[RMDB]
RNA sequence: GGGAACGACUCGAGUAGAGUCGAAAAUGUAUGACCGGUGUGUUGUUAAGGGGGGCGACCUUGUGUCAGCAGUGUGCUAUAGGGUCACAAUAUUAUGGCUGGUUUUUUGUCCCAGCAGAACUAGAGCUAGAUAUCAGACAUUCGUGUCUGAUAUCUAAAAAGAAACAACAACAACAAC
Reactivity to DMS in 0.01 (KOAc 150mM, MgCl2 10mM, bicine 150mM(pH8.5), 24C), signal-to-noise 5, nucleotides 027 to 126: u010g010u010a070u010g020a090c030c030g010g000u000g020u010g010u000u010g020u010u010a110a130g000g010g000g010g020g010c100g020a050c030c030u010u000g010u010g010u000c050a070g020c040a070g000u010g010u000g010c040u000a080u000a070g020g000g000u000c040a070c090a060a090u000a080u000u010a100u020g010g010c010u000g010g010u000u000u000u010u010u000g000u010c080c000c010a100g020c080a070g010a040a060c100u000a070g010a110g010c130
Reactivity to 2A3 in 0.01 (KOAc 150mM, MgCl2 10mM, bicine 150mM(pH8.5), 24C), signal-to-noise 1, nucleotides 027 to 126: u110g000u050a010u140g080a020c000c010g020g080u020g000u020g000u030u060g050u050u200a110a130g000g020g010g030g010g010c000g000a000c000c000u030u000g020u020g020u110c000a000g000c050a030g030u090g060u070g160c020u070a050u060a090g030g020g010u000c010a010c030a070a040u180a070u280u110a140u180g080g000c000u010g030g000u000u000u000u000u120u200g030u070c000c010c000a020g010c000a000g020a010a030c080u070a010g020a010g120c050

The record gives the reactivity of an RNA of 177 nucleotides to DMS and 2A3. The reactions ran in a buffer of 150 mM KOAc, 10 mM MgCl2 and 150 mM bicine (pH 8.5), at 24 C. 2A3 adducts were read by reverse transcription with SuperScript II with manganese.